[RMDB]
RNA sequence: GGGAACGACUCGAGUAGAGUCGAAAAGUGGAGCAGUACCGAGCGGAGCUGGAAUCGGUGCAGCUGGCCAAGGGAGCGCUGGAGCAGAGCUAUCUGGUGUUGCAGGCGGACGCAGAGCAACUGCGCCAACAGGUAGGCAUUUCGAUGCCUACCUGUUAAAAGAAACAACAACAACAAC
Reactivity to DMS in 0.01 (KOAc 150mM, MgCl2 10mM, bicine 150mM(pH8.5), 24C), signal-to-noise 2, nucleotides 027 to 126: g000u000g000g010a070g040c040a080g010u020a060c060c030g000a140g010c070g010g010a110g060c070u010g000g000a090a070u000c060g000g030u000g000c040a050g030c020u000g000g000c030c070a090a130g010g000g010a120g010c070g010c040u000g000g020a090g020c090a090g010a130g020c040u000a040u000c040u000g000g010u000g010u010u000g010c070a090g010g020c060g010g010a060c020g000c030a040g000a180g000c150a110a120c030u000g010c020g020c040c000
Source: RMDB library OK2TRN, as collected in RNAgym. This 177-nucleotide RNA was probed chemically with DMS. Values cover nucleotides 27 to 126.